[RMDB]
RNA sequence: GGGAACGACUCGAGUAGAGUCGAAAACAUGGUAUGGCCUCGCAUCCGGCCUACCCACAGAAUCAACAACUUUGGAUGCGGUGGGCGAGAGCCCUAAGAAGGAGUCUCCGCGCCUGGGGAGCUCCGUAUGACUUAAUGUAUUACCAGGCGUAUACAAGGGAUAAAUUAAUUUCGAUUAAUUUAUCCCAAAAGAAACAACAACAACAAC
Reactivity to 2A3 in 0.01 (KOAc 150mM, MgCl2 10mM, bicine 150mM(pH8.5), 24C), signal-to-noise 2, nucleotides 027 to 156: c020a060u090g010g000u080a100u270g000g010c010c000u020c010g030c000a000u000c000c000g010g000c000c010u000a000c010c030c000a140c030a050g180a010a130u270c090a060a180c000a030a050c100u210u160u080g000g000a010u000g010c010g010g070u050g000g000g020c050g020a050g010a040g050c010c000c000u020a060a020g020a010a060g000g000a000g060u090c000u000c020c000g040c000g010c000c000u010g000g000g000g000a000g010c000u010c000c000g000u010a090u050g080a030c000u050u150a100a080u200g070u210a160u110u100a080c000c000a010g000g000c000g000u010a000u010a020c050a050a070
Reactivity to DMS in 0.01 (KOAc 150mM, MgCl2 10mM, bicine 150mM(pH8.5), 24C), signal-to-noise 1, nucleotides 027 to 156: c070a070u000g050g000u000a060u010g050g010c000c000u010c060g010c040a020u000c020c020g000g000c030c020u000a030c020c010c090a300c170a180g010a190a110u000c070a010a160c090a160a100c130u000u010u010g030g020a030u000g020c000g020g100u000g030g000g040c000g040a300g000a300g020c010c010c030u020a000a090g020a200a130g010g000a170g000u000c030u010c010c010g010c030g000c010c030u000g000g000g000g000a050g010c040u000c010c040g040u000a040u010g010a120c120u000u010a070a150u000g010u010a190u020u000a100c010c010a080g000g020c000g060u020a030u030a030c100a070a190